Structure probing data (2A3 and DMS) for a 177-nucleotide construct. Conditions: 150 mM KOAc, 10 mM MgCl2 and 150 mM bicine (pH 8.5), 24 C. Values cover nucleotides 27 to 126. For 2A3, 1,436 sequencing reads were counted. Source: RMDB libraries RFM100 and RFMREP, as collected in RNAgym.
RNA sequence: GGGAACGACUCGAGUAGAGUCGAAAAGGAUCGCUUGAGCCCAGGAGUUCUGGGCUGUAGUGCGCUAUGCCGAUCGGGUGUCCGCACUAAGUUCGGCAUCAAUAUGGUGACCUCCCGGGAGCGGGGGUACUGACCGUUGUUUCGACAACGGUCAGUAAAAAGAAACAACAACAACAAC
Reactivity to 2A3 in 0.01 (KOAc 150mM, MgCl2 10mM, bicine 150mM(pH8.5), 24C), signal-to-noise 3, nucleotides 027 to 126: g060g000a020u060c020g000c040u050u160g120a030g000c000c000c000a000g050g090a290g100u300u140c010u000g000g000g000c000u000g000u000a000g010u010g010c070g000c050u050a000u030g000c030c000g040a080u050c010g060g000g010u020g020u000c020c090g030c010a000c010u040a160a130g010u010u000c000g010g000c000a000u050c000a000a170u140a120u180g100g000u090g030a100c010c000u090c010c010c020g020g060g040a090g040c020g000g010g000g060g000
Reactivity to DMS in 0.01 (KOAc 150mM, MgCl2 10mM, bicine 150mM(pH8.5), 24C), signal-to-noise 2, nucleotides 027 to 126: g030g000a060u020c050g010c020u000u000g000a040g000c010c000c000a000g060g010a260g000u080u030c000u000g020g000g020c000u010g000u000a020g020u000g010c130g000c130u000a050u010g000c000c000g000a050u000c050g000g010g050u000g000u010c300c130g000c050a000c010u030a060a140g010u000u020c020g010g000c000a010u020c080a060a150u020a030u010g000g000u000g000a070c020c020u030c010c000c030g010g000g020a120g020c040g020g000g000g010g000